An RNA of 177 nucleotides, treated with DMS and read out base by base.
RNA sequence: GGGAACGACUCGAGUAGAGUCGAAAAGAUAUGGACGCUUCACUACUGCUCUUGGACCUCGGAAACGAGCUAGAGCAAGUGAGAGCGUCCUAAGUCUUAAACAGCCCCGACUUCGGUCGGGGCUGAAGGAGAUAACGUACUUCGGUACGUUAUCUCCAAAAGAAACAACAACAACAAC
Reactivity to DMS in 0.01 (KOAc 150mM, MgCl2 10mM, bicine 150mM(pH8.5), 24C), signal-to-noise 1, nucleotides 027 to 126: g000a060u000a300u010g000g000a000c000g010c010u000u000c000a040c000u000a190c300u000g020c000u000c000u000u010g100g000a160c300c020u000c010g010g000a100a100a080c000g000a010g010c020u020a000g000a020g020c000a020a030g000u020g000a060g020a050g000c010g010u000c000c000u000a000a090g000u010c000u010u010a060a130a270c010a040g000c000c000c000c000g000a010c000u010u020c260g050g000u010c020g000g000g000g000c000u000g000a020a040
For DMS, 899 sequencing reads were counted. It was measured as part of the RMDB library TTRDEL. The RNA was probed in 150 mM KOAc, 10 mM MgCl2 and 150 mM bicine (pH 8.5) at 24 C.